[RMDB]
RNA sequence: GGGAACGACUCGAGUAGAGUCGAAAAGGCAUGUACAUUGGCUCGACCGGUGAGCGCGGUUUACACCAUCUCAUUUGGGAGGUGGUCGACAACGCGGUCGACGAGGCGAUGGCCGGUUAUGCAACCACGGGCUGCCAAUGUUCGCAUUGGCAGCCCGAAAAGAAACAACAACAACAAC
Reactivity to 2A3 in 0.01 (KOAc 150mM, MgCl2 10mM, bicine 150mM(pH8.5), 24C), signal-to-noise 1, nucleotides 027 to 126: g020g000c090a080u110g100u260a000c020a050u120u300g000g000c000u060c000g100a220c030c000g010g030u020g000a000g090c000g000c010g000g100u000u010u290a020c020a000c000c000a000u050c000u000c000a220u070u260u260g300g060g000a000g000g000u000g000g000u000c020g000a000c000a030a030c000g000c000g130g140u000c000g000a120c020g000a110g000g060c010g050a060u090g000g060c000c060g000g000u100u020a000u020g030c000a020a020c040c000a000